Chemical mapping of a 177-nucleotide RNA with DMS and 2A3. Reactivities are given for positions 27 through 126. It was measured as part of the RMDB library M2PK50. For 2A3 the reverse transcriptase was SuperScript II with manganese. Values are in units of 0.01, from 0 to 300, in steps of 10.

[RMDB]
RNA sequence: GGGAACGACUCGAGUAGAGUCGAAAAAGUUUAGAUUUCGAUCUAAACUAGACCACUAAGAGGAUGAGGAGUGACUACGACGCAUCUAGUAGAAUGCGCCCAGCUGUGAGCAGUUCGCUGCUCACAAGGAGUUUAGCUAGUUCGCUAGCUAAACUCCAAAAGAAACAACAACAACAAC
Reactivity to DMS in 0.01 (KOAc 150mM, MgCl2 10mM, bicine 150mM(pH8.5), 24C), signal-to-noise 2, nucleotides 027 to 126: a030g040u010u010u010a000g000a000u000u000u010c160g020a010u000c000u000a000a010a010c000u000a060g010a230c000c010a130c070u020a080a090g020a040g000g010a080u000g000a050g000g000a120g020u010g000a130c100u000a090c040g000a130c030g000c020a000u000c020u000a090g000u010a050g000a050a050u010g010c050g000c000c000c070a060g000c150u000g020u000g000a010g010c000a010g000u000u010c190g020c020u000g000c000u000c010a020c010a030a100
Reactivity to 2A3 in 0.01 (KOAc 150mM, MgCl2 10mM, bicine 150mM(pH8.5), 24C), signal-to-noise 2, nucleotides 027 to 126: a000g030u020u000u010a030g000a040u060u080u120c230g060a000u000c010u000a020a010a000c000u000a010g030a030c010c010a010c050u040a070a050g040a060g230g020a110u110g020a070g030g030a020g040u060g010a030c020u050a040c090g060a000c010g000c010a020u000c020u070a020g030u040a050g060a200a040u050g010c010g060c040c000c010a010g040c050u050g030u000g000a000g000c010a000g000u020u090c130g070c060u000g020c020u010c020a000c000a000a000